[RMDB]
RNA sequence: GGGAACGACUCGAGUAGAGUCGAAAAUUAUUGUUCUCGGCGCCAGAUCCCCACUCUUCAUUCGAACUGCGCAGAGCGCUAUUCGUCGUCCCAUAUGUCUGGGAUUUCUUCUGAAUUGCAAGUUGACCAAUGGAGUCACAUUCGUGUGACUCCAUUGAAAAGAAACAACAACAACAAC
Reactivity to DMS in 0.01 (KOAc 150mM, MgCl2 10mM, bicine 150mM(pH8.5), 24C), signal-to-noise 3, nucleotides 027 to 126: u010u010a090u000u000g010u000u010c010u000c030g010g020c060g030c020c040a030g010a100u000c030c020c000c070a120c110u010c040u000u000c100a160u000u000c080g010a030a100c080u000g000c060g040c050a120g000a120g000c050g010c020u000a040u000u000c020g000u000c100g010u000c010c000c010a060u010a070u010g010u010c100u020g000g000g000a060u000u000u000c030u010u000c040u010g000a050a080u000u010g020c070a080a100g010u000u010g020a150c160